[RMDB]
RNA sequence: GGGAACGACUCGAGUAGAGUCGAAAAGAUAUGGAGCGUGAACAAGCUUUUGACGUCUACAAAACGAUGUGUGGUCGGAAACGACCACCAUCGUUUUGUAGACGAUAAGCUUCCACGCUCCUAAGUCCAUAUGUAGAUGCUUCGGCAUCUACAUAUGAAAAGAAACAACAACAACAAC
Reactivity to DMS in 0.01 (KOAc 150mM, MgCl2 10mM, bicine 150mM(pH8.5), 24C), signal-to-noise 4, nucleotides 027 to 126: g010a100u010a300u010g010g010a010g010c000g020u000g000a100a150c300a060a020g010c010u000u000u010u000g020a250c120g020u000c010u010a000c000a020a010a010a020c000g010a010u000g000u020g070u000g010g010u000c000g010g000a070a120a190c020g020a010c000c000a000c000c000a010u000c000g000u000u000u000u000g010u000a000g020a010c000g000a030u010a000a010g000c010u010u000c160c000a010c000g020c000u000c000c000u000a010a080g010u000c060